[RMDB]
RNA sequence: GGGAACGACUCGAGUAGAGUCGAAAAGAGCAUAGUUCAGAUGUACGCCAUAUCCGUAUGUACAUUCUGAACUAAGCUAUAUGGAUAUGGCAUCCAUUAAUCUUCUAGAUUAAUGGAUUGAACUAUAGAUAGUUGAGACAUUCGUGUCUUAGCUAUCAAAAGAAACAACAACAACAAC
Reactivity to 2A3 in 0.01 (KOAc 150mM, MgCl2 10mM, bicine 150mM(pH8.5), 24C), signal-to-noise 9, nucleotides 027 to 126: g090a010g000c030a010u020a010g000u000u000c000a010g010a040u030g030u050a010c020g000c010c000a030u030a040u050c030c040g050u060a050u120g030u010a010c010a040u120u050c010u030g010a010a010c000u000a000a000g000c000u000a010u010a020u080g050g010a010u010a010u030g010g000c000a000u000c000c000a000u000u000a000a000u000c020u250u060c110u130a040g000a010u000u000a000a000u000g000g000a000u000u030g000a010a000c000u010a000u020a080
Reactivity to DMS in 0.01 (KOAc 150mM, MgCl2 10mM, bicine 150mM(pH8.5), 24C), signal-to-noise 9, nucleotides 027 to 126: g000a040g020c030a100u000a000g010u000u000c000a000g000a050u000g000u000a020c020g010c140c100a090u030a060u040c180c140g010u020a060u020g010u010a030c050a030u030u020c040u010g000a020a020c030u000a010a030g010c030u010a050u020a050u030g000g000a120u010a020u010g000g010c040a040u000c000c000a000u000u000a000a000u000c010u000u040c250u050a050g010a000u000u000a000a000u000g000g000a000u000u010g020a040a060c030u000a030u010a100